[RMDB]
About this RNA
This 177-nucleotide RNA was probed chemically with DMS and 2A3. The data come from the RNA Mapping Database (RMDB), library OK1LIB. The DMS profile rests on 8,586 reads. For DMS the reverse transcriptase was MarathonRT. Values are in units of 0.01, from 0 to 300, in steps of 10.
RNA sequence: GGGAACGACUCGAGUAGAGUCGAAAAAUGCCGGAGCAAUUGUUGGGUGGCACGUGCCACUCCUCGUUGGGAUACGGUUCCAGUCUGGGAUUCUCCACCAGCUCAUUGUGCUCCGCAAUGACGGUGACAAUGACGCUGGAUUCGUCCAGCGUCAUUGAAAAGAAACAACAACAACAAC
Reactivity to DMS in 0.01 (KOAc 150mM, MgCl2 10mM, bicine 150mM(pH8.5), 24C), signal-to-noise 3, nucleotides 027 to 126: a060u040g020c080c000g020g010a040g000c050a060a070u040u020g030u000u020g000g010g020u000g000g040c010a210c300g000u010g000c000c010a020c000u000c010c010u000c110g000u000u000g000g000g000a080u020a120c100g010g010u000u010c030c010a110g000u010c080u000g020g010g010a120u000u000c010u010c070c000a050c010c000a040g020c150u000c010a000u010u010g000u010g000c040u020c020c030g010c010a030a000u010g010a040c010g000g010u000g000a300
Reactivity to 2A3 in 0.01 (KOAc 150mM, MgCl2 10mM, bicine 150mM(pH8.5), 24C), signal-to-noise 6, nucleotides 027 to 126: a010u200g010c010c010g020g010a040g020c040a070a110u170u170g080u030u040g010g010g010u000g010g020c050a050c300g180u300g000c010c000a000c010u060c000c010u020c010g050u020u030g030g000g000a050u050a150c050g070g000u020u040c020c010a020g090u060c070u100g020g020g090a120u090u000c010u010c010c000a020c000c010a040g000c060u000c000a010u000u020g030u050g060c070u070c080c040g000c000a010a030u030g010a010c010g000g010u010g000a020